This 177-nucleotide RNA was probed chemically with 2A3 and DMS. The DMS profile rests on 1,622 reads.
RNA sequence: GGGAACGACUCGAGUAGAGUCGAAAAGAUAUGGAGAAGAUCGAUAAGAUGACUUCGGAAACGAAGUUCAUCUUUUGACGAUCCUCCUAAGUCAAAAGCACCGUACAGGUUCGCCUGUACGGUGCAACAGGAACGUUAUGUUCGCAUAACGUUCCUGAAAAGAAACAACAACAACAAC
Reactivity to 2A3 in 0.01 (KOAc 150mM, MgCl2 10mM, bicine 150mM(pH8.5), 24C), signal-to-noise 1, nucleotides 027 to 126: g020a010u060a020u130g030g020a040g020a300a110g000a060u000c020g010a030u000a150a000g000a000u020g010a010c000u010u030c000g000g030a070a000a020c010g000a000a020g020u160u030c010a010u020c000u020u020u020u040g100a090c010g000a000u000c020c010u010c000c010u020a150a020g070u050c020a100a010a040a130g000c000a000c020c000g000u020a000c010a000g040g120u050u190c300g100c020c000u000g000u000a010c000g030g010u000g000c000a000a000
Reactivity to DMS in 0.01 (KOAc 150mM, MgCl2 10mM, bicine 150mM(pH8.5), 24C), signal-to-noise 2, nucleotides 027 to 126: g000a050u000a300u000g000g020a030g000a110a150g030a020u000c020g030a180u010a040a010g000a010u000g010a020c000u000u000c000g000g000a110a090a180c000g000a020a020g020u010u000c010a000u000c000u000u000u000u000g030a130c080g010a020u000c000c010u000c000c010u000a040a120g000u010c020a060a030a140a160g020c000a000c010c000g010u000a000c000a010g000g000u000u010c250g010c000c010u020g000u000a000c020g010g000u010g000c000a000a030
It was measured as part of the RMDB library TTRDEL.